Chemical mapping of a 177-nucleotide RNA with 2A3 and DMS.
RNA sequence: GGGAACGACUCGAGUAGAGUCGAAAAUGGCCAUGGCUCGCCUGCUCUUCCACAACCCUGUCUAUGCCAUCCUGGACGAGUGCACCUCUGCGGUGUCAGCGGAUGGGGAGGAGGUGCUUUACAAGGCACCAGUGUAAGCAUUCGUGCUUACACUGGUAAAAGAAACAACAACAACAAC
Reactivity to 2A3 in 0.01 (KOAc 150mM, MgCl2 10mM, bicine 150mM(pH8.5), 24C), signal-to-noise 5, nucleotides 027 to 126: u090g050g000c020c020a080u060g060g020c030u030c080g040c020c010u040g030c010u000c000u060u010c010c010a070c050a110a160c010c020c000u010g000u000c010u040a080u110g040c010c010a040u050c030c040u080g020g050a050c040g050a050g040u130g040c040a050c020c010u070c100u150g120c150g050g030u010g030u060c020a020g060c070g090g000a040u030g020g000g000g010a050g020g030a020g000g000u040g010c000u100u120u060a100c070a060a070g050g020c020
Reactivity to DMS in 0.01 (KOAc 150mM, MgCl2 10mM, bicine 150mM(pH8.5), 24C), signal-to-noise 6, nucleotides 027 to 126: u020g010g020c020c040a120u010g010g010c050u000c090g000c030c020u000g000c040u000c020u000u010c020c020a070c110a130a100c030c010c010u010g010u000c030u000a090u010g010c040c040a070u010c040c050u000g010g010a080c090g000a090g020u010g010c050a070c020c020u000c130u010g010c180g010g000u000g010u000c050a070g010c090g010g000a070u000g000g010g000g000a100g000g010a070g000g010u000g000c040u000u010u010a080c160a070a090g010g010c050
It was measured as part of the RMDB library OK2TRN.
Values cover nucleotides 27 to 126.